The record gives the reactivity of an RNA of 177 nucleotides to DMS and 2A3. 2A3 adducts were read by reverse transcription with SuperScript II with manganese. It was measured as part of the RMDB library M2PK50. Values cover nucleotides 27 to 126. The 2A3 profile rests on 17,221 reads. The RNA was probed in 150 mM KOAc, 10 mM MgCl2 and 150 mM bicine (pH 8.5) at 24 C.

RNA sequence: GGGAACGACUCGAGUAGAGUCGAAAAUGUCCCAGUUUCGACUGGGACAAAAGCAUGAGGAGGAUCAAUGAUCAAAGCCGUCGCUCAUGCGUAAAGACGGCAAAAGGCUAGUGUUCGCACUAGCCAAUCUGUCUUACAGAUUCGUCUGUAAGACAGAAAAAGAAACAACAACAACAAC
Reactivity to DMS in 0.01 (KOAc 150mM, MgCl2 10mM, bicine 150mM(pH8.5), 24C), signal-to-noise 6, nucleotides 027 to 126: u000g010u000c000c000c000a020g010u000u000u010c140g020a010c000u000g000g010g010a010c010a010a020a050a120g010c010a010u010g000a010g010g020a170g020g000a060u010c080a150a120u020g000a070u010c080a090a080a130g010c000c000g000u000c030g020c060u000c010a010u000g000c010g020u010a070a070a120g000a030c010g010g000c020a060a070a080a090g010g000c000u000a010g010u010g010u010u010c220g000c010a010c000u000a000g000c000c000a010a020
Reactivity to 2A3 in 0.01 (KOAc 150mM, MgCl2 10mM, bicine 150mM(pH8.5), 24C), signal-to-noise 6, nucleotides 027 to 126: u050g000u000c000c000c000a000g000u030u060u070c200g090a020c010u010g000g000g010a000c020a010a050a000a000g000c000a010u020g010a010g090g060a060g060g030a050u090c070a100a280u300g050a030u080c040a030a100a030g000c010c000g010u010c000g030c020u010c010a030u030g000c000g000u000a010a010a020g020a010c000g000g000c000a030a080a010a010g000g000c000u000a000g000u010g030u050u070c220g030c080a000c000u000a000g000c000c000a000a010